Chemical mapping of a 177-nucleotide RNA with 2A3 and DMS. It was measured as part of the RMDB library M2PK50. The RNA was probed in 150 mM KOAc, 10 mM MgCl2 and 150 mM bicine (pH 8.5) at 24 C. The DMS profile rests on 1,214 reads.
[RMDB]
RNA sequence: GGGAACGACUCGAGUAGAGUCGAAAACUUAACGCGUUCGCGCGUUAAGAAACAACAUUAACAUCGAGUUGACGAUGACACAAAUACCGUCAGUGUAGACGGAAAGCAUUCGCUUCGGCGAAUGCAAGGUAUAUGACCCGUUCGCGGGUCAUAUACCAAAAGAAACAACAACAACAAC
Reactivity to 2A3 in 0.01 (KOAc 150mM, MgCl2 10mM, bicine 150mM(pH8.5), 24C), signal-to-noise 2, nucleotides 027 to 126: c000u000u020a000a000c000g010c000g000u010u040c150g000c000g010c010g090u010u000a010a000g000a010a050a000c040a000a010c020a080u110u190a080a050c010a040u000c010g020a010g170u090u050g230a160c040g000a010u080g060a010c010a010c000a160a090a010u170a110c000c020g000u000c000a090g120u080g160u300a060g000a000c000g010g000a020a110a000g000c010a010u000u010c000g000c010u020u090c250g120g000c000g000a000a000u000g010c000a010a020
Reactivity to DMS in 0.01 (KOAc 150mM, MgCl2 10mM, bicine 150mM(pH8.5), 24C), signal-to-noise 2, nucleotides 027 to 126: c000u000u000a000a000c020g030c000g000u000u000c170g080c010g040c010g000u000u000a020a010g000a090a080a070c040a080a050c090a060u000u080a150a120c020a010u000c020g020a160g020u000u010g000a150c020g010a030u000g000a170c160a140c210a010a010a060u000a090c000c010g000u000c070a200g040u000g020u040a080g000a010c000g000g020a060a060a110g030c000a000u000u000c000g010c000u020u020c160g010g000c000g020a000a000u000g010c000a000a020